[RMDB]
RNA sequence: GGGAACGACUCGAGUAGAGUCGAAAACUGGUAAGAUCGGAAGAUCCGGGUGACAAUAGCAGCGAAAAAAGAUCAGCAGAUAACGGCAACGCGGCUGCUGCCAACAAGGGAACUGUGCCGUUUAGGACAUCCUACACGAAUUCGUUCGUGUAGGAUGAAAAGAAACAACAACAACAAC
Reactivity to DMS in 0.01 (KOAc 150mM, MgCl2 10mM, bicine 150mM(pH8.5), 24C), signal-to-noise 5, nucleotides 027 to 126: c040u000g000g010u000a100a090g000a040u000c020g010g020a110a100g000a030u000c020c050g020g010g020u000g010a080c100a070a070u000a050g010c010a020g020c030g000a000a050a080a070a100a090g000a080u010c050a090g020c040a060g010a120u000a030a050c040g000g000c040a030a080c110g010c100g020g010c020u010g010c030u000g010c040c080a060a060c160a050a060g000g000g010a080a070c090u020g020u010g010c020c020g000u000u000u010a090g000g010a220
Reactivity to 2A3 in 0.01 (KOAc 150mM, MgCl2 10mM, bicine 150mM(pH8.5), 24C), signal-to-noise 3, nucleotides 027 to 126: c020u030g050g040u070a080a040g020a090u050c030g020g100a070a010g040a110u020c020c010g040g020g020u060g030a040c030a050a070u030a100g000c010a000g020c040g120a020a100a040a030a020a040g070a100u080c020a010g040c000a010g020a120u120a090a020c020g020g000c030a070a020c060g010c010g110g000c000u050g000c020u010g020c030c010a080a090c040a110a120g060g020g010a030a040c020u050g020u030g020c000c000g010u000u020u070a080g000g010a010
An RNA of 177 nucleotides, treated with DMS and 2A3 and read out base by base. For DMS, 6,559 sequencing reads were counted. Reactivities are given for positions 27 through 126. It was measured as part of the RMDB library OK2TST.